[RMDB]
RNA sequence: GGGAACGACUCGAGUAGAGUCGAAAACACGGCUUGAGCGUGAACGAGCUGUACACGCACAACCACUGGAUGGGCCACCCGGACUCCAUCGUGCAGGGCGCGAGGAAGAACUGCCCGCUGUACAUCCUGCCUCAUUGGGCGCAGUUCAAGCAGAAGGGGGAAUAAUGGUGUUCGCACCAUUAUUCCCAAAAGAAACAACAACAACAAC
Reactivity to 2A3 in 0.01 (KOAc 150mM, MgCl2 10mM, bicine 150mM(pH8.5), 24C), signal-to-noise 1, nucleotides 027 to 156: c090a000c040g000g070c040u000u000g000a040g000c090g000u050g030a000a060c080g070a110g090c100u050g020u100a020c010a010c030g060c010a010c040a000a180c020c010a010c070u130g080g000a070u000g010g000g000c000c000a150c140c080c010g100g000a040c010u060c060c040a120u000c050g010u070g030c020a050g040g000g040c000g000c010g090a070g080g100a130a130g110a190a000c040u110g010c010c010c000g000c010u020g000u020a030c000a040u000c000c110u060g040c040c040u220c030a300u300u300g000g040g000c060g050c040a010g020u000u000c020a000a000g060c000a010g000a090a000g020g000

Structure probing data (2A3) for a 207-nucleotide construct.
Reactivities are given for positions 27 through 156.
Conditions: 150 mM KOAc, 10 mM MgCl2 and 150 mM bicine (pH 8.5), 24 C.
For 2A3, 437 sequencing reads were counted.
It was measured as part of the RMDB library OK3TST.